[RMDB]
This 177-nucleotide RNA was probed chemically with 2A3 and DMS.
RNA sequence: GGGAACGACUCGAGUAGAGUCGAAAAGACGAUCACACUAAUAUCAGAAAGGCUUUCUGUUGUGAUUACAGGACACCCAGGAGGUUUUAGAGGAAAGUACGUAGACGGCCAGACGUACUCAAAGGAAAUUAUAUCCCGCGUUCGCGCGGGAUAUAAUAAAAGAAACAACAACAACAAC
Reactivity to 2A3 in 0.01 (KOAc 150mM, MgCl2 10mM, bicine 150mM(pH8.5), 24C), signal-to-noise 1, nucleotides 027 to 126: g030a100c000g000a000u020c000a000c000a010c040u300a140a050u040a070u300c020a020g090a000a090a040g150g060c030u000u060u070c000u110g000u050u030g000u000g000a010u060u000a040c100a060g010g010a000c000a000c020c000c000a000g010g020a000g070g060u030u070u080u300a040g000a010g020g300a080a180a000g000u000a000c000g000u000a000g040a120c000g000g040c050c000a010g000a100c000g000u000a000c000u000c110a050a150a030g040g040a110a000
Reactivity to DMS in 0.01 (KOAc 150mM, MgCl2 10mM, bicine 150mM(pH8.5), 24C), signal-to-noise 2, nucleotides 027 to 126: g020a070c120g000a010u000c000a010c000a060c300u040a160a090u020a040u000c050a060g000a080a070a100g010g000c080u000u010u000c010u030g020u020u000g000u000g000a060u000u040a150c180a080g000g020a060c180a080c000c110c000a100g000g030a140g000g000u000u000u000u000a060g030a160g030g000a110a100a010g000u000a000c020g000u000a040g010a140c130g000g000c050c010a150g000a040c040g020u000a020c020u010c180a060a070a130g030g010a070a070
About this RNA: For DMS the reverse transcriptase was MarathonRT. The 2A3 profile rests on 345 reads. The reactions ran in a buffer of 150 mM KOAc, 10 mM MgCl2 and 150 mM bicine (pH 8.5), at 24 C.